[RMDB]
An RNA of 177 nucleotides, treated with DMS and 2A3 and read out base by base. 2A3 adducts were read by reverse transcription with SuperScript II with manganese. Source: RMDB library OK1LIB, as collected in RNAgym. The DMS profile rests on 48,574 reads. Conditions: 150 mM KOAc, 10 mM MgCl2 and 150 mM bicine (pH 8.5), 24 C.
RNA sequence: GGGAACGACUCGAGUAGAGUCGAAAAGAGAUGAGUCUCAACACAUCUGAAUGUGUUGUACAUACCGUUCUGACUACGAUAUGUACGGUGUAUACAGUUAUACAACGAGACUCAUCGUAGUCAGAUAGCUAGAGCGAGAUUUCGAUCUUGCUCUAGCAAAAGAAACAACAACAACAAC
Reactivity to DMS in 0.01 (KOAc 150mM, MgCl2 10mM, bicine 150mM(pH8.5), 24C), signal-to-noise 8, nucleotides 027 to 126: g010a120g000a040u000g000a000g000u000c000u000c000a010a010c000a010c000a020u000c300u070g020a120a070u010g010u000g000u000u010g010u000a000c010a000u010a030c070c030g010u010u010c000u000g010a010c010u000a010c010g000a070u000a010u000g010u000a000c000g010g020u000g010u000a000u000a040c300a150g020u050u010a010u000a010c010a000a010c000g000a010g010a010c000u000c000a010u000c000g010u000a000g010u000c000a000g000a080u040a110
Reactivity to 2A3 in 0.01 (KOAc 150mM, MgCl2 10mM, bicine 150mM(pH8.5), 24C), signal-to-noise 9, nucleotides 027 to 126: g060a000g000a000u000g000a000g000u000c000u000c000a000a000c000a000c000a010u060c130u250g170a290a060u020g000u000g000u000u000g000u000a000c000a000u010a010c000c020g020u030u040c000u000g000a000c000u000a000c000g010a010u000a000u030g000u000a000c000g000g000u010g000u000a000u000a010c100a050g160u220u030a000u000a000c000a020a010c000g000a000g000a000c000u000c000a000u000c000g000u000a000g000u000c000a000g000a000u030a010